[RMDB]
RNA sequence: GGGAACGACUCGAGUAGAGUCGAAAAUAGUGCGAUAAGAGCCCUUUCAACCUUGGUGCCGUCCCCAUCCUCGGUGUCGGGGACCUCGUUUAGAUCGUUCAUGAUGUCGAUGAUGCCGCGAUGCUGGGAGCUAAAUGGGAUUCGUCCCAUUUAGCUCAAAAGAAACAACAACAACAAC
Reactivity to DMS in 0.01 (KOAc 150mM, MgCl2 10mM, bicine 150mM(pH8.5), 24C), signal-to-noise 3, nucleotides 027 to 126: u010a060g010u010g030c030g010a100u020a090a080g000a130g020c020c000c000u010u020u030c080a160a060c070c060u020u010g000g010u010g030c090c020g010u020c020c010c000c010a070u010c040c030u000c050g000g000u000g020u000c060g010g000g030g030a070c040c020u010c000g020u000u010u030a080g010a050u000c080g000u030u000c030a060u010g010a040u010g000u000c060g000a070u010g000a030u010g000c020c010g000c140g000a010u020g020c020u030g000g010
Reactivity to 2A3 in 0.01 (KOAc 150mM, MgCl2 10mM, bicine 150mM(pH8.5), 24C), signal-to-noise 7, nucleotides 027 to 126: u180a010g100u070g040c020g030a020u040a160a090g050a040g030c020c000c000u040u080u080c110a110a100c030c020u060u090g040g030u080g040c010c030g030u050c000c000c000c000a040u040c000c020u040c030g030g000u050g030u030c020g020g010g030g030a030c000c000u010c000g020u020u080u100a140g010a100u070c040g050u120u100c070a070u180g050a030u060g060u070c030g010a030u060g010a010u060g060c020c010g030c010g020a030u070g030c030u060g050g060